Source: RMDB library OK3TST, as collected in RNAgym. This 207-nucleotide RNA was probed chemically with 2A3. High 2A3 reactivity points to a flexible backbone, as in loops and unpaired stretches. The 2A3 profile rests on 647 reads. The reactions ran in a buffer of 150 mM KOAc, 10 mM MgCl2 and 150 mM bicine (pH 8.5), at 24 C.

RNA sequence: GGGAACGACUCGAGUAGAGUCGAAAAUGCGCGCGCGUGCGAGGCCCGCCCGGACCUACCCCAGCGGUUCCACUACGACGUGCGGGAGGCCCAGCGCGGAUGUCUGGAGGACGUGGCGCGGCGCGUGCCGGCCUUUUUGCGCGCACUGGCCAGCGCGACGGCUUCAGAAUUUCGAUUCUGAAGCCGUAAAAGAAACAACAACAACAAC
Reactivity to 2A3 in 0.01 (KOAc 150mM, MgCl2 10mM, bicine 150mM(pH8.5), 24C), signal-to-noise 1, nucleotides 027 to 156: u150g020c030g000c000g000c000g000c000g030u030g070c010g020a000g000g020c010c000c040g030c010c010c040g020g010a060c030c000u170a280c240c000c010c010a010g010c000g110g000u270u070c030c050a150c010u190a070c080g120a020c020g060u080g020c070g010g000g000a000g020g020c010c020c030a050g000c140g000c090g060g020a060u120g010u030c010u070g070g010a050g050g020a050c060g030u120g070g010c080g000c000g040g000c010g000c000g000u050g050c000c120g030g000c000c000u190u220u040u130u160g040c000g000c010g000c000a000c010u000g000g000c000c000a000g000c010g000c000g000